Source: RMDB library OK3TST, as collected in RNAgym. An RNA of 207 nucleotides, treated with DMS and 2A3 and read out base by base.

[RMDB]
RNA sequence: GGGAACGACUCGAGUAGAGUCGAAAAAAUUAGCUGCUACUAACUCAUCCCUCUGCUGGUAUAUCAGACAGCAGCCAUGUCAUUUACCUCUAUCCCCAAAGCAUCUGGUACAGGGACUUUGUUCAGAGCAGGUGUUUACCUAGAGUCAAUGGUUUAGAAUUCUUCUUGUGUUCGCACAAGAAGAAUUAAAAGAAACAACAACAACAAC
Reactivity to DMS in 0.01 (KOAc 150mM, MgCl2 10mM, bicine 150mM(pH8.5), 24C), signal-to-noise 2, nucleotides 027 to 156: a100a090u030u000a060g010c000u000g030c040u010a220c040u000a060a070c050u000c130a120u000c010c000c000u000c030u010g030c020u010g040g000u000a100u000a110u000c080a170g000a070c000a070g020c000a040g040c040c020a080u000g020u000c040a060u010u000u000a090c070c000u000c040u000a100u000c000c020c020c030a110a110a090g010c000a050u000c030u010g030g020u000a090c070a080g040g000g020a050c010u000u000u000g010u010u000c050a130g000a110g010c070a080g020g060u010g060u000u000u000a060c010c030u000a060g020a090g020u000c050a060a170u000g000g030u010u020u000a190g000
Reactivity to 2A3 in 0.01 (KOAc 150mM, MgCl2 10mM, bicine 150mM(pH8.5), 24C), signal-to-noise 2, nucleotides 027 to 156: a000a020u200u100a000g020c060u030g010c010u040a080c040u050a150a080c030u030c090a030u020c030c000c010u060c020u030g030c000u030g000g050u140a090u060a080u250c050a100g080a160c010a010g040c000a010g020c030c020a070u070g000u010c010a040u000u010u180a030c030c040u020c020u070a080u120c000c020c020c000a020a080a000g030c000a050u000c030u060g060g000u090a090c050a080g000g050g000a010c000u070u070u150g040u040u050c060a000g020a030g040c000a000g010g000u020g000u000u030u070a060c010c020u010a010g000a000g050u030c000a030a080u090g000g050u010u100u100a050g020
Overview: The reactions ran in a buffer of 150 mM KOAc, 10 mM MgCl2 and 150 mM bicine (pH 8.5), at 24 C. Reactivities are given for positions 27 through 156.